[RMDB]
RNA sequence: GGGAACGACUCGAGUAGAGUCGAAAAGCCUUACGAUUCGUCGUAAGGCAUACAAAGUUUUGGCACUAUGAGCCCGCAGCGUUGGUGCUCCCACGCGGUCCAAUACGACGGAUUUCGAUCCGUCGAAGCGAACCAUGUGGUUCGCCACAUGGUUCGCAAAAGAAACAACAACAACAAC
Reactivity to DMS in 0.01 (KOAc 150mM, MgCl2 10mM, bicine 150mM(pH8.5), 24C), signal-to-noise 1, nucleotides 027 to 126: g000c000c000u000u000a010c010g020a040u020u010c250g000u000c010g010u000a000a020g000g020c020a000u000a020c150a070a070a140g000u010u020u010u000g000g000c000a110c100u000a040u000g010a100g000c000c020c040g000c080a100g030c060g010u020u010g000g010u000g010c110u000c060c010c030a030c050g050c090g010g000u000c050c030a080a060u010a160c010g000a020c000g000g010a030u000u000u000c190g010a030u010c000c000g000u000c000g010a060a060
Reactivity to 2A3 in 0.01 (KOAc 150mM, MgCl2 10mM, bicine 150mM(pH8.5), 24C), signal-to-noise 2, nucleotides 027 to 126: g000c000c000u000u000a010c000g000a000u020u090c210g030u010c000g000u140a000a010g000g000c040a010u040a000c050a000a140a000g000u020u010u100u140g040g000c050a010c040u100a070u200g060a020g070c000c050c010g000c050a100g000c030g020u090u200g020g000u120g060c040u060c020c010c000a040c020g030c020g020g030u000c020c010a060a040u080a120c020g000a010c020g020g000a000u060u040u110c190g070a020u000c000c010g020u000c000g000a020a000
Source information
Structure probing data (DMS and 2A3) for a 177-nucleotide construct. Conditions: 150 mM KOAc, 10 mM MgCl2 and 150 mM bicine (pH 8.5), 24 C. For 2A3, 2,451 sequencing reads were counted. It was measured as part of the RMDB library M2PK50.